[RMDB]
RNA sequence: GGGAACGACUCGAGUAGAGUCGAAAAGGACGUUCACGCCGUCGAGGCCGGCACGGUCACCUCGGCCGGCUGGAUGAACAACGCCGCCGGCAUCACCGUGGUGAUCGACCACGGCGGCGGCAUCACGUCUAUUUAUACGAUUCGUCGUAUAAAUAGAAAAAGAAACAACAACAACAAC
Reactivity to 2A3 in 0.01 (KOAc 150mM, MgCl2 10mM, bicine 150mM(pH8.5), 24C), signal-to-noise 9, nucleotides 027 to 126: g040g030a020c040g010u020u010c040a020c110g010c020c000g020u030c020g010a050g060g010c080c140g050g070c140a170c270g080g010u080c040a050c060c020u030c000g040g000c060c060g010g000c040u040g010g000a060u040g020a050a050c060a040a040c130g010c010c000g000c000c000g030g040c040a130u200c050a030c020c000g000u020g000g010u040g040a300u180c070g040a030c000c000a010c000g030g000c000g010g000c000g000g000c010a010u040c020a000c020g060
Reactivity to DMS in 0.01 (KOAc 150mM, MgCl2 10mM, bicine 150mM(pH8.5), 24C), signal-to-noise 9, nucleotides 027 to 126: g000g010a100c050g010u000u000c050a060c080g010c060c010g020u000c010g010a070g010g020c100c050g020g010c100a130c110g010g010u000c080a140c040c040u000c030g010g000c040c020g010g000c000u010g020g000a080u000g000a070a100c170a110a110c160g010c000c000g010c000c000g010g000c190a120u010c150a200c180c020g020u000g000g010u000g000a070u000c100g000a060c030c010a050c000g000g000c000g000g000c000g010g010c020a060u000c100a050c100g000
This 177-nucleotide RNA was probed chemically with 2A3 and DMS.
Values are in units of 0.01, from 0 to 300, in steps of 10.
For DMS the reverse transcriptase was MarathonRT.
The 2A3 profile rests on 38,872 reads.
The RNA was probed in 150 mM KOAc, 10 mM MgCl2 and 150 mM bicine (pH 8.5) at 24 C.
The data come from the RNA Mapping Database (RMDB), library OK2TRN.